[RMDB]
Structure probing data (DMS and 2A3) for a 177-nucleotide construct. The RNA was probed in 150 mM KOAc, 10 mM MgCl2 and 150 mM bicine (pH 8.5) at 24 C. It was measured as part of the RMDB library OK2TST. For 2A3 the reverse transcriptase was SuperScript II with manganese. For DMS, 2,729 sequencing reads were counted. For DMS the reverse transcriptase was MarathonRT.
RNA sequence: GGGAACGACUCGAGUAGAGUCGAAAAAUAGGGAAGUGCUAAAUUGCAGAGGUAUCAUGUUGCCCAGCACUUGAUCAAAUCCUAGAUCCUAGGUCUGCUUGGUGGCAUGCUUCCUAGGUAGUGGAUCGCCUCAUACCGUAUUCGUACGGUAUGAGGCAAAAGAAACAACAACAACAAC
Reactivity to DMS in 0.01 (KOAc 150mM, MgCl2 10mM, bicine 150mM(pH8.5), 24C), signal-to-noise 3, nucleotides 027 to 126: a100u020a060g020g010g010a060a070g030u000g010c050u000a060a090a090u000u000g000c050a050g000a130g000g010u010a070u010c060a040u000g000u000u010g020c020c070c110a080g010c020a030c060u000u000g010a040u000c080a090a070a070u010c030c030u000a080g010a100u010c050c030u000a030g000g000u010c050u000g010c010u010u010g010g020u020g010g000c030a030u000g010c100u000u000c000c020u010a020g010g000u020a080g020u010g010g010a070u010c180
Reactivity to 2A3 in 0.01 (KOAc 150mM, MgCl2 10mM, bicine 150mM(pH8.5), 24C), signal-to-noise 3, nucleotides 027 to 126: a000u170a020g100g000g000a050a010g030u010g070c040u090a070a140a160u150u090g030c030a020g050a070g050g050u080a050u110c020a040u110g060u120u060g030c040c090c020a020g010c010a000c020u050u010g020a060u060c030a070a140a040u040c000c000u010a030g020a180u020c030c000u020a010g030g020u040c050u040g040c020u000u090g140g020u110g060g070c010a020u060g010c030u050u060c000c010u010a000g010g000u030a030g080u050g120g010a060u040c100